RNA sequence: GGGAACGACUCGAGUAGAGUCGAAAAAAAAAAGAUAUGGACAGAGGAGUGGCAAUCCGAAGAACAUAGGUCGGAAACGACCUAUGGGAGGAUUGAACUACCACGAAUCUGUCCUAAGUCAAAAAAACAUAAUGAUUCAGUUCGCUGAAUCAUUAUGAAAAGAAACAACAACAACAAC
Reactivity to DMS in 0.01 (KOAc 150mM, MgCl2 10mM, bicine 150mM(pH8.5), 24C), signal-to-noise 3, nucleotides 027 to 126: a010a010a050a140a150a180g020a010u000a040u000g000g000a020c000a020g000a030g000g010a300g020u020g000g000c000a000a010u010c010c010g020a170a080g000a120a170c020a000u000a000g010g000u010c000g020g020a020a010a020c010g020a020c010c000u000a010u010g000g010g020a080g000g020a020u000u000g000a060a010c030u010a300c050c020a000c020g010a300a180u000c000u000g000u000c000c000u000a000a050g000u030c010a000a000a030a070a050a060a180
Reactivity to 2A3 in 0.01 (KOAc 150mM, MgCl2 10mM, bicine 150mM(pH8.5), 24C), signal-to-noise 1, nucleotides 027 to 126: a020a020a040a020a010a080g010a000u020a010u050g000g000a010c010a010g020a010g090g000a040g010u010g020g000c010a000a010u020c040c020g300a300a030g000a040a010c000a000u000a000g000g010u000c000g030g000a020a010a010c000g000a000c020c010u000a000u000g010g000g020a120g000g000a010u010u000g000a000a020c070u240a050c060c010a000c000g000a020a020u000c000u010g000u000c000c000u000a000a000g000u010c010a020a160a000a000a060a000a050